RNA sequence: GGGAACGACUCGAGUAGAGUCGAAAACAACGGCGUCUCCCUGAUGGGGGAUGGUCGUGGUUGAUGAUUAAUCUGGGACCGCGUGAGGCAGUAACCUGAGCAGCGAAAACGGAUAGCUGCGGGCGGCAGACGGAUCGCAUGCCUGAGUGGGCGGCUGCAUGUAAGACUUCUUCGGAAGUCUUACAUGAAAAGAAACAACAACAACAAC
Reactivity to 2A3 in 0.01 (KOAc 150mM, MgCl2 10mM, bicine 150mM(pH8.5), 24C), signal-to-noise 3, nucleotides 027 to 156: c080a010a000c000g010g000c000g010u020c000u050c020c000c070u200g180a300u300g010g000g000g000g000a010u020g170g030u000c010g000u010g040g000u040u050g050a130u020g010a040u080u170a130a030u060c030u070g020g020g100a080c030c020g030c050g050u060g110a090g000g060c020a030g050u060a000a070c000c000u060g090a010g030c050a010g000c050g060a020a040a050a110c050g060g010a090u100a050g010c020u020g000c000g000g040g000c000g010g000c030a020g070a120c050g080g010a040u060c010g010c040a040u120g010c000c000u060g040a080g040u160g000g050g030c000g040g000c040u040g000
Reactivity to DMS in 0.01 (KOAc 150mM, MgCl2 10mM, bicine 150mM(pH8.5), 24C), signal-to-noise 2, nucleotides 027 to 156: c010a060a030c010g020g010c020g020u010c000u000c000c010c010u000g020a170u000g050g010g000g020g050a010u000g030g030u000c000g010u000g000g000u000u000g010a140u020g010a100u000u000a050a130u000c020u010g010g010g000a090c010c030g010c030g000u020g010a130g020g010c010a110g040u010a090a070c030c010u000g010a150g020c030a050g030c020g000a090a050a150a180c150g010g000a130u000a170g020c010u000g000c000g020g030g030c020g000g040c020a050g000a260c040g000g010a100u000c010g010c060a040u000g030c000c020u000g020a180g010u010g000g010g040c030g000g000c040u000g040